[RMDB]
Structure probing data (DMS) for a 177-nucleotide construct.

RNA sequence: GGGAACGACUCGAGUAGAGUCGAAAAGAUAUGGAGGACUCCGAUAAGCUGGUGUCGGAAACGACACUCAGCUUUUGACGGAGGCUCCUAAGUCAAAGGCGAGAGUGAGUUCGCUCACUCUCGCCAACAUAGUGACCACCUUCGGGUGGUCACUAUGAAAAGAAACAACAACAACAAC
Reactivity to DMS in 0.01 (KOAc 150mM, MgCl2 10mM, bicine 150mM(pH8.5), 24C), signal-to-noise 1, nucleotides 027 to 126: g000a000u000a240u010g000g000a000g020g010a210c010u000c010c000g010a110u000a040a010g030c000u010g020g020u010g010u010c000g010g010a080a010a150c010g010a020c010a010c000u020c000a000g000c000u000u000u000u010g010a220c050g010g020a030g000g030c020u010c000c010u020a030a090g000u000c040a090a080a170g020g000c010g000a010g000a020g030u000g000a070g000u010u030c260g030c020u000c000a010c000u000c010u000c000g010c000c000a020a020